Notes
This 177-nucleotide RNA was probed chemically with 2A3 and DMS. Reactivities are given for positions 27 through 126. The data come from the RNA Mapping Database (RMDB), library OK1LIB. For 2A3, 420 sequencing reads were counted. The RNA was probed in 150 mM KOAc, 10 mM MgCl2 and 150 mM bicine (pH 8.5) at 24 C.

[RMDB]
RNA sequence: GGGAACGACUCGAGUAGAGUCGAAAAGAUACACCUUUGACGAGUCACCAAUGACAGAUAUGAGACUAGUGGCGGAAAAAGUGAUGGAAGGUAGGCAAUAUGAGCUAUCCAACGGAGACUUAGAUUGCGGCUUACCUUCUUUCGAGAAGGUAAGCCGAAAAGAAACAACAACAACAAC
Reactivity to 2A3 in 0.01 (KOAc 150mM, MgCl2 10mM, bicine 150mM(pH8.5), 24C), signal-to-noise 1, nucleotides 027 to 126: g150a000u040a000c050a220c000c020u060u060u160g110a100c000g020a070g040u040c040a000c150c000a100a120u130g050a180c010a000g170a000u090a000u300g290a130g000a000c110u000a000g000u040g000g050c000g000g000a040a100a040a040a040g000u170g070a060u060g070g020a040a000g000g000u000a040g000g000c010a000a000u160a220u300g180a000g000c000u000a070u110c070c000a000a000c000g020g000a000g010a000c000u000u030a260g000a180u300u000g090
Reactivity to DMS in 0.01 (KOAc 150mM, MgCl2 10mM, bicine 150mM(pH8.5), 24C), signal-to-noise 1, nucleotides 027 to 126: g000a160u030a040c060a180c080c000u030u040u000g010a140c230g000a120g000u010c070a000c020c060a020a080u010g000a040c110a020g080a080u010a070u000g000a080g000a140c000u000a110g060u000g020g010c010g010g010a110a060a060a130a040g040u020g000a100u030g000g000a020a000g040g000u000a030g010g000c030a030a140u000a020u010g000a040g040c000u000a000u000c000c000a120a110c160g000g000a000g000a050c080u030u000a120g000a050u000u000g010
As a SHAPE reagent, 2A3 marks flexible, mostly unpaired nucleotides at the ribose 2'-OH.